[RMDB]
RNA sequence: GGGAACGACUCGAGUAGAGUCGAAAACAAAACCUGCCGUUCCGGGCAAGGUGGUACCCGAUCCGCAAGGCGGCCCCGGCCGAAUUGCGAAAGGGGAUGUGGCCGAUCCGGCAACCAAACGGACACGGACCAACGUACAGUUCGCUGUACGUUGGUCAAAAGAAACAACAACAACAAC
Reactivity to 2A3 in 0.01 (KOAc 150mM, MgCl2 10mM, bicine 150mM(pH8.5), 24C), signal-to-noise 2, nucleotides 027 to 126: c030a010a060a010a040c000c000u000g030c000c000g070u090u080c000c020g000g010g000c060a080a100g020g010u030g010g070u080a060c000c000c010g020a050u090c070c030g000c010a030a000g070g010c010g000g000c000c000c000c020g100g000c000c000g030a000a070u010u020g020c000g000a030a030a010g000g020g000g000a090u180g010u100g140g000c000c000g010a040u070c100c010g040g000c010a030a040c010c030a090a010a030c030g030g000a040c020a030c140g040
Reactivity to DMS in 0.01 (KOAc 150mM, MgCl2 10mM, bicine 150mM(pH8.5), 24C), signal-to-noise 1, nucleotides 027 to 126: c020a110a010a140a120c010c020u000g000c030c000g000u020u000c000c050g000g020g030c080a020a010g010g030u010g020g000u000a130c000c000c020g000a220u000c040c160g010c000a010a010g000g000c020g020g010c000c000c240c210g000g000c000c000g000a000a040u040u000g000c020g100a000a130a080g010g000g000g000a250u010g030u000g000g040c000c040g000a150u110c100c080g000g070c300a040a090c160c240a020a160a020c040g000g000a100c300a060c110g040
An RNA of 177 nucleotides, treated with 2A3 and DMS and read out base by base. For DMS the reverse transcriptase was MarathonRT. The reactions ran in a buffer of 150 mM KOAc, 10 mM MgCl2 and 150 mM bicine (pH 8.5), at 24 C. Values cover nucleotides 27 to 126.